[RMDB]
RNA sequence: GGGAACGACUCGAGUAGAGUCGAAAAUUAGUACGAGAGGACCGGGUCUGACGCACCACUGGUGCAUCGGUUGUACUGUCAAGUGCAUGGCCGAGUAGCUAAGUGCGGACGGGAUAAGCGCUGAAAGUGGCGAUAACCGAUUCGUCGGUUAUCGCCAAAAAGAAACAACAACAACAAC
Reactivity to DMS in 0.01 (KOAc 150mM, MgCl2 10mM, bicine 150mM(pH8.5), 24C), signal-to-noise 1, nucleotides 027 to 126: u040u000a070g010u020a010c160g000a030g020a070g020g000a120c060c020g000g050g000u010c020u000g000a060c060g010c000a010c030c000a010c170u000g080g030u000g010c170a230u000c030g000g040u020u000g000u030a000c060u000g010u030c220a160a090g030u000g030c010a080u140g000g070c000c000g000a030g000u100a210g010c000u000a130a120g000u000g020c030g030g000a060c050g000g000g020a060u060a140a170g000c000g020c010u000g000a020a070a110g060